Conditions: 150 mM KOAc, 10 mM MgCl2 and 150 mM bicine (pH 8.5), 24 C.
Structure probing data (2A3 and DMS) for a 177-nucleotide construct.
It was measured as part of the RMDB library VIROID.
RNA sequence: GGGAACGACUCGAGUAGAGUCGAAAAAGAGGGUCGCCCAGGAAUGGCGGGACCCCACUUCAGCAGGGUCCGCGUUCCAUCCUUUCUUACCUGAUGGCCGGCAUGGUCCCAGCCUCCUCGCUGGCGCGUAUAUAUGCCAGUUCGCUGGCAUAUAUACAAAAGAAACAACAACAACAAC
Reactivity to 2A3 in 0.01 (KOAc 150mM, MgCl2 10mM, bicine 150mM(pH8.5), 24C), signal-to-noise 4, nucleotides 027 to 126: a000g050a020g000g040g020u080c040g110c050c020c040a000g100g080a060a050u190g300g300c100g020g050g060a040c010c060c020c010a070c050u300u220c090a080g030c020a040g020g000g010u000c000c010g030c010g030u030u020c000c010a020u030c010c000u100u220u090c030u080u060a080c010c020u060g070a110u130g160g000c030c010g000g030c050a050u100g010g030u070c040c000c000a020g030c000c020u020c010c010u020c050g010c020u020g020g000c060g010c010
Reactivity to DMS in 0.01 (KOAc 150mM, MgCl2 10mM, bicine 150mM(pH8.5), 24C), signal-to-noise 3, nucleotides 027 to 126: a060g000a110g000g000g000u010c130g010c040c020c060a130g000g010a040a030u000g010g000c030g030g020g000a030c010c000c020c030a040c110u010u010c220a090g030c120a100g010g000g020u000c010c000g020c030g000u000u010c000c000a080u010c040c020u010u000u000c030u000u000a090c080c030u010g010a110u000g000g000c030c030g010g010c040a100u010g000g010u000c030c020c020a120g010c020c020u010c030c020u000c090g030c050u000g000g010c090g020c170